[RMDB]
RNA sequence: GGGAACGACUCGAGUAGAGUCGAAAAACCGGAGGCCGACAAUCCAGGGAACCGGAUGUCAUCACGUUGCUGCAGUACCAGAUGGCAUCUUAAAUCCGAUCUGCAAAUAAGCAUGUAGAAAGCUGAUAAAAUCACACACACUUCGGUGUGUGUGAAAGGUUAAUCACAGGUUCGCCUGUGAUUAACCAAAAGAAACAACAACAACAAC
Reactivity to 2A3 in 0.01 (KOAc 150mM, MgCl2 10mM, bicine 150mM(pH8.5), 24C), signal-to-noise 3, nucleotides 027 to 156: a000c030c000g010g020a030g030g000c020c020g020a080c040a070a080u050c040c050a030g060g020g000a030a080c050c020g000g010a000u000g020u010c000a010u010c010a010c170g080u090u090g030c060u070g040c060a060g040u130a070c010c030a030g000a010u020g000g000c010a000u000c000u010u080a050a050a020u010c030c000g030a050u030c000u020g000c020a020a030a110u110a090a010g010c070a060u130g020u090a050g140a160a080a010g000c020u020g060a040u150a070a140a020a030u010c000a000c000a000c000a000c000a000c000u030u060c110g080g010u000g000u010g000u000g010u000g000a000a000a000
Reactivity to DMS in 0.01 (KOAc 150mM, MgCl2 10mM, bicine 150mM(pH8.5), 24C), signal-to-noise 1, nucleotides 027 to 156: a050c000c040g010g010a140g010g020c010c040g010a060c040a070a190u060c020c040a060g030g000g010a120a090c050c140g020g000a030u010g000u000c020a030u010c030a170c130g010u010u000g050c010u000g000c030a140g030u000a060c030c010a210g010a020u010g000g010c010a010u000c030u000u000a100a100a120u000c020c020g010a140u000c040u000g010c030a000a090a090u010a110a080g010c050a040u010g020u010a080g000a050a070a100g000c060u000g000a160u000a030a080a110a150u000c000a000c010a060c000a000c000a020c050u000u010c300g100g020u010g010u010g060u010g010u020g000a010a040a080
The record gives the reactivity of an RNA of 207 nucleotides to 2A3 and DMS. Values are in units of 0.01, from 0 to 300, in steps of 10. DMS adducts were read by reverse transcription with MarathonRT. For 2A3 the reverse transcriptase was SuperScript II with manganese.